[RMDB]
RNA sequence: GGGAACGACUCGAGUAGAGUCGAAAACGCAUACCAGCUCGUACGCGAGCUGGUAUGCAAAAAUUGGUGUAGCCUUACCGUAGUAGGCACAAAAACGUCAGCUGGAUCUACGGAUCCAGCUGACGAAAAAAGUGUUUUGUGUUCGCACAAAACACAACAAUGUAGGAAAGUUCGCUUUCCUACAUUGAAAAGAAACAACAACAACAAC
Reactivity to 2A3 in 0.01 (KOAc 150mM, MgCl2 10mM, bicine 150mM(pH8.5), 24C), signal-to-noise 2, nucleotides 027 to 156: c070g000c000a000u000a000c010c010a040g030c000u000c010g020u030a050c300g010c010g100a000g000c000u000g010g000u000a000u000g000c020a000a010a000a010a010u070u140g000g010u040g110u160a010g000c010c000u000u010a000c020c030g030u000a010g010u000a010g030g030c030a010c030a050a070a040a000a000c010g010u010c010a000g000c000u010g000g000a000u000c000u030a050c260g080g000a000u000c000c000a000g000c000u000g010a000c000g010a000a000a000a000a000a000g000u000g000u000u000u000u000g010u010g020u010u040c090g020c080a000c000a000a000a000a000c000a000c000a000a000
Reactivity to DMS in 0.01 (KOAc 150mM, MgCl2 10mM, bicine 150mM(pH8.5), 24C), signal-to-noise 1, nucleotides 027 to 156: c190g000c010a030u000a010c030c010a040g010c020u000c010g050u000a100c300g040c000g010a010g010c000u000g000g000u000a020u000g030c000a000a010a020a060a090u000u010g000g010u000g000u000a060g020c000c010u000u000a150c050c060g060u010a060g030u000a050g010g030c000a130c090a070a070a050a090a050c000g000u000c000a040g000c000u000g000g000a020u000c010u010a130c270g080g000a020u000c000c000a000g000c000u010g020a000c020g000a010a010a050a080a050a060g010u020g000u000u010u000u010g030u010g020u000u000c300g010c060a020c020a000a000a000a010c030a010c020a030a100